[RMDB]
RNA sequence: GGGAACGACUCGAGUAGAGUCGAAAAGACAAUGGAAUUCAUUUGAUGUAUCCAGAGAGGCCAAUUGUCAUUAGUAAGGCUUUAGAAACUUCAAAGAUUGCGGCUAAUUGCUUCGGACAACAUGUUAUCAUAUUAGGUUCUUCGGAACCUAAUAUGAAAAAGAAACAACAACAACAAC
Reactivity to 2A3 in 0.01 (KOAc 150mM, MgCl2 10mM, bicine 150mM(pH8.5), 24C), signal-to-noise 3, nucleotides 027 to 126: g030a000c030a010a080u050g030g070a060a120u160u100c060a090u130u070u250g070a060u060g040u060a060u000c020c020a000g050a000g010a010g130g000c040c020a030a060u070u040g040u050c010a040u000u040a010g040u050a100a040g050g020c000u060u030u060a060g050a110a110a040c040u080u040c060a040a050a020g040a120u030u050g070c020g000g000c010u060a060a090u040u050g010c000u030u050c020g000g020a010c000a070a000c010a050u090g050u200u120a120
Reactivity to DMS in 0.01 (KOAc 150mM, MgCl2 10mM, bicine 150mM(pH8.5), 24C), signal-to-noise 6, nucleotides 027 to 126: g000a090c080a050a070u000g010g000a080a090u010u000c050a130u010u010u000g010a080u010g010u000a090u000c040c030a060g000a110g010a070g000g010c040c030a070a110u010u000g020u000c050a090u010u000a090g010u010a050a070g010g010c050u000u000u000a090g010a070a080a090c070u010u000c060a040a060a100g010a090u010u000g030c160g010g000c040u000a050a080u000u010g010c040u000u000c060g000g010a040c060a020a040c100a060u000g010u010u010a110